The data come from the RNA Mapping Database (RMDB), libraries RFM100 and RFMREP. This 177-nucleotide RNA was probed chemically with 2A3 and DMS. DMS adducts were read by reverse transcription with MarathonRT. The reactions ran in a buffer of 150 mM KOAc, 10 mM MgCl2 and 150 mM bicine (pH 8.5), at 24 C.
RNA sequence: GGGAACGACUCGAGUAGAGUCGAAAAACGGUCAGUACGCUGACCGAAUGUUUUAUAUCACCCCACGAUAAGCCCCGGAAACUUAUUGUGUUACAAGAUAUAUAAGAGCACUGGUACGCCAGUGCAAGAAUAAAACCGAGUUCGCUCGGUUUUAUUCAAAAGAAACAACAACAACAAC
Reactivity to 2A3 in 0.01 (KOAc 150mM, MgCl2 10mM, bicine 150mM(pH8.5), 24C), signal-to-noise 8, nucleotides 027 to 126: a000c010g010g000u000c000a010g010u050a050c260g020c100u000g000a000c000c000g000a010a010u040g010u000u130u020u050a100u020a030u070c030a080c010c010c000c010a000c000g000a010u020a030a010g030c020c030c040c040g140g070a090a060a010c010u020u010a010u020u020g010u000g010u040u040a050c060a100a050g050a040u030a000u010a000u040a120a130g070a010g080c000a000c000u000g010g000u060a050c170g050c020c000a000g000u000g000c000a000a020
Reactivity to DMS in 0.01 (KOAc 150mM, MgCl2 10mM, bicine 150mM(pH8.5), 24C), signal-to-noise 4, nucleotides 027 to 126: a110c000g000g010u000c000a000g020u000a090c230g040c000u000g020a010c000c000g010a030a040u020g010u000u000u000u000a030u010a030u010c040a140c070c030c080c010a050c000g010a020u000a010a020g000c090c030c050c180g010g010a100a100a130c030u000u000a030u000u010g010u000g000u010u030a180c170a150a160g000a040u000a030u010a030u020a060a140g020a200g000c010a010c000u000g000g000u010a110c230g030c000c000a000g000u000g000c000a000a000